[RMDB]
RNA sequence: GGGAACGACUCGAGUAGAGUCGAAAAUAGCCAUGACUGACUAGGCUAGCUAGGUACGAUCUAGUGUAUGUAUGGUACUGAUCCGUACCCAUGCGAUCAGUAGUGAUCGGAUCUCGUACCGGUACUCGCAGAACAGAAAGUUCGCUUUCUGUUCUGCAAAAGAAACAACAACAACAAC
Reactivity to 2A3 in 0.01 (KOAc 150mM, MgCl2 10mM, bicine 150mM(pH8.5), 24C), signal-to-noise 5, nucleotides 027 to 126: u050a010g000c020c010a060u150g100a120c160u100g040a050c050u090a060g010g030c000u000a020g020c020u080a100g050g010u040a040c020g030a030u010c010u040a070g070u050g050u170a080u140g140u040a090u170g050g050u020a010c010u030g040a060u030c070c030g030u040a060c000c040c000a040u080g010c010g040a050u060c030a020g120u170a060g110u030g050a030u050c000g000g010a020u000c050u020c070g010u000a010c000c000g000g000u040a060c030u040c110
Reactivity to DMS in 0.01 (KOAc 150mM, MgCl2 10mM, bicine 150mM(pH8.5), 24C), signal-to-noise 5, nucleotides 027 to 126: u000a030g020c000c000a140u010g020a220c170u000g000a070c120u000a140g010g000c050u000a030g010c040u010a050g010g000u000a050c060g010a060u000c040u000a080g020u000g020u010a050u010g000u000a060u000g000g010u000a050c020u000g000a050u000c080c080g000u000a060c030c060c030a050u000g000c050g010a030u000c040a040g010u000a110g010u000g000a050u000c010g000g000a040u010c080u000c110g010u000a020c000c000g010g010u000a050c110u000c160
About this RNA: The record gives the reactivity of an RNA of 177 nucleotides to 2A3 and DMS. The data come from the RNA Mapping Database (RMDB), library OK2TRN. For DMS, 6,232 sequencing reads were counted.